[RMDB]
RNA sequence: GGGAACGACUCGAGUAGAGUCGAAAAGGAACAUCCUUCGGGAUGUUCCAUAGGCGGCGCCUCUCGCUAAGCGGCGCGCAGAGGCGCGCAGCCCAGCUUGAAAGUAAGCCUAGUUCGCUAGGCUUAAUCAUAUGACGGCGUUCGCGCCGUCAUAUGAAAAAGAAACAACAACAACAAC
Reactivity to DMS in 0.01 (KOAc 150mM, MgCl2 10mM, bicine 150mM(pH8.5), 24C), signal-to-noise 1, nucleotides 027 to 126: g010g010a010a000c000a010u000c000c010u000u030c190g000g020g010a000u000g000u000u000c000c000a020u000a030g010g030c020g020g060c020g030c010c000u000c010u000c080g030c020u000a050a140g000c190g010g000c300g010c080g020c210a030g000a030g030g000c030g000c010g000c030a080g010c000c000c020a070g010c140u000u010g010a120a090a100g010u000a000a020g010c010c000u010a000g030u000u000c190g000c000u010a000g000g000c000u000u000a010a060